[RMDB]
RNA sequence: GGGAACGACUCGAGUAGAGUCGAAAAGAUAUGGAUCCACGUAAGACAUGCGUGAGUGUCGGAAACGACACGAACGCAACAGCUUAUGGAUCCUAAGUCAAAGCUCGUUGUGUUCGCACAACGAGCAGGACACACCUUACUUCGGUAAGGUGUGUCCAAAAGAAACAACAACAACAAC
Reactivity to 2A3 in 0.01 (KOAc 150mM, MgCl2 10mM, bicine 150mM(pH8.5), 24C), signal-to-noise 1, nucleotides 027 to 126: g020a010u040a010u050g010g020a010u000c020c010a010c210g120u070a010a000g050a050c130a300u300g000c010g010u050g020a040g020u020g030u000c010g030g020a020a030a000c000g000a000c010a010c010g020a030a000c000g000c050a050a000c020a000g020c000u040u020a010u040g000g000a010u050c000c000u000a000a040g010u020c050a200a060a020g020c040u020c000g030u010u000g050u000g080u130u130c300g020c140a020c000a000a010c000g000a000g020c010a000
Reactivity to DMS in 0.01 (KOAc 150mM, MgCl2 10mM, bicine 150mM(pH8.5), 24C), signal-to-noise 1, nucleotides 027 to 126: g020a020u000a170u020g000g000a000u000c000c020a020c300g010u020a000a010g030a050c040a300u040g020c000g020u000g000a300g010u000g030u070c020g000g020a010a030a120c000g040a020c000a000c000g000a260a000c020g010c000a030a020c150a080g010c000u000u000a040u020g000g010a020u000c000c000u000a000a060g000u000c010a100a130a140g010c010u000c000g000u000u030g020u000g000u040u000c230g040c000a020c000a000a000c000g000a030g000c020a020

This 177-nucleotide RNA was probed chemically with 2A3 and DMS. The reactions ran in a buffer of 150 mM KOAc, 10 mM MgCl2 and 150 mM bicine (pH 8.5), at 24 C. The DMS profile rests on 838 reads. Source: RMDB library TTRDES, as collected in RNAgym. For DMS the reverse transcriptase was MarathonRT.